[RMDB]
Chemical mapping of a 207-nucleotide RNA with 2A3 and DMS. Conditions: 150 mM KOAc, 10 mM MgCl2 and 150 mM bicine (pH 8.5), 24 C.
RNA sequence: GGGAACGACUCGAGUAGAGUCGAAAAUAGGCGAACGAGAGGCCCUCUCCUGUGCGGAGUUGUCACGCUGACAGAAUUGUUAUGAUGUCCGAUUCCGGUAGCAUCGCGGCGAUGUUUUCAUAGGACAUCUUAUGAACCCAAGCGCUUCGGGGAAGCACCCUAAUGAUAGUUUCGACUAUCAUUAGGGAAAAGAAACAACAACAACAAC
Reactivity to 2A3 in 0.01 (KOAc 150mM, MgCl2 10mM, bicine 150mM(pH8.5), 24C), signal-to-noise 4, nucleotides 027 to 156: u100a040g010g030c030g020a070a050c040g010a060g000a020g150g020c010c010c000u030c010u040c000c020u090g070u100g060c070g030g030a060g040u060u040g050u070c040a030c080g030c020u050g040a010c010a030g100a110a110u100u080g050u090u110a060u140g000a010u000g010u000c010c000g020a070u140u070c030c030g040g040u060a010g030c010a010u020c050g040c080g180g080c100g010a020u020g020u010u070u040u050c060a050u130a070g010g010a020c000a030u000c000u010u030a100u070g050a040a070c000c010c010a070a040g030c050g000c090u080u110c100g030g000g010g010a020a020g010c010a070
Reactivity to DMS in 0.01 (KOAc 150mM, MgCl2 10mM, bicine 150mM(pH8.5), 24C), signal-to-noise 3, nucleotides 027 to 156: u000a110g010g020c020g030a060a050c060g010a100g000a120g000g030c030c020c050u000c030u000c010c000u000g030u000g020c060g020g010a160g020u010u000g000u000c030a130c050g010c010u000g000a130c050a090g010a100a110u000u000g020u000u000a100u000g000a050u000g020u000c020c000g000a190u000u000c080c060g020g030u000a060g020c000a060u000c000g000c130g030g000c110g030a040u000g020u000u000u000u000c070a110u000a150g020g000a040c040a030u000c000u000u010a050u010g000a110a160c040c030c040a090a120g000c050g020c060u000u000c050g030g030g040g000a100a090g020c060a170